RNA sequence: GGGAACGACUCGAGUAGAGUCGAAAAGCUGUAAAUGGUCUUACAGGGUUUGCAACAGCUUCUCCUAAGAAUUUUAAUUCUUUUUGAAUUAAGUAUCCACAAACUCUCUCUUGUAAAAACUCGCCUGAUUAGCUCAUCAUUUCGAUGAUGAGCUAAUAAAAGAAACAACAACAACAAC
Reactivity to 2A3 in 0.01 (KOAc 150mM, MgCl2 10mM, bicine 150mM(pH8.5), 24C), signal-to-noise 3, nucleotides 027 to 126: g010c000u020g000u020a020a180a130u150g070g020u010c020u070u150a090c060a100g060g050g020u000u090u010g090c110a110a010c000a010g010c000u010u000c030u030c050c020u050a130a050g030a080a050u090u110u060u080a070a060u020u030c040u060u210u090u200u240g030a050a040u010u020a030a030g030u060a070u010c050c020a030c020a030a090a110c020u010c000u000c010u040c040u100u110g100u110a090a100a000a090a050c030u060c030g040c000c020u000g000
Reactivity to DMS in 0.01 (KOAc 150mM, MgCl2 10mM, bicine 150mM(pH8.5), 24C), signal-to-noise 2, nucleotides 027 to 126: g020c000u000g000u000a070a050a150u010g000g000u020c040u000u070a130c250a160g000g000g000u000u020u060g020c190a190a050c010a040g000c000u000u000c110u000c010c060u000a080a060g000a090a070u060u040u010u010a000a060u000u000c000u010u020u060u040u010g000a020a010u000u000a000a020g000u010a020u050c060c080a120c100a050a080a070c080u000c000u010c040u000c030u000u010g000u010a030a080a020a140a110c000u000c030g010c010c040u000g000

Chemical mapping of a 177-nucleotide RNA with 2A3 and DMS. 2A3 adducts were read by reverse transcription with SuperScript II with manganese. For DMS, 2,145 sequencing reads were counted. The data come from the RNA Mapping Database (RMDB), library OK1LIB. The reactions ran in a buffer of 150 mM KOAc, 10 mM MgCl2 and 150 mM bicine (pH 8.5), at 24 C. DMS adducts were read by reverse transcription with MarathonRT.